[RMDB]
RNA sequence: GGGAACGACUCGAGUAGAGUCGAAAAGCAAAUGACGACCUUAAAGGUGGGAUCUUACAGGUCAUGGAUGCAAUAGCCUCGUGCCAUCAGGCCUAUGGUCCUGUAUCAGCUAGUAUGAUCAACGAUCCCCUUAGGUUCUCUUCGGAGAACCUAAGGGAAAAGAAACAACAACAACAAC
Reactivity to DMS in 0.01 (KOAc 150mM, MgCl2 10mM, bicine 150mM(pH8.5), 24C), signal-to-noise 2, nucleotides 027 to 126: g060c050a050a140a130u010g010a090c120g030a060c010c030u000u020a130a100a060g020g030u000g000g000g000a060u000c040u010u010a070c200a100g000g020u000c000a060u000g020g030a120u000g020c050a060a050u000a110g020c020c020u020c220g000u020g020c050c030a090u020c120a080g000g000c050c010u000a090u020g010g000u020c070c040u000g000u010a040u010c100a110g000c070u000a080g000u010a040u010g020a020u040c090a060a140c170g000a080u000c050
Reactivity to 2A3 in 0.01 (KOAc 150mM, MgCl2 10mM, bicine 150mM(pH8.5), 24C), signal-to-noise 4, nucleotides 027 to 126: g000c020a030a150a120u160g060a050c040g020a010c000c020u120u220a170a040a020g080g010u110g010g040g010a000u000c010u010u090a080c090a080g010g020u010c030a060u090g090g020a010u040g020c050a090a180u060a150g010c000c030u110c150g110u160g020c030c020a150u140c050a080g010g000c020c000u130a150u190g040g000u100c000c000u020g020u040a060u070c020a000g030c000u070a010g070u110a200u130g060a050u110c070a020a050c060g010a070u060c020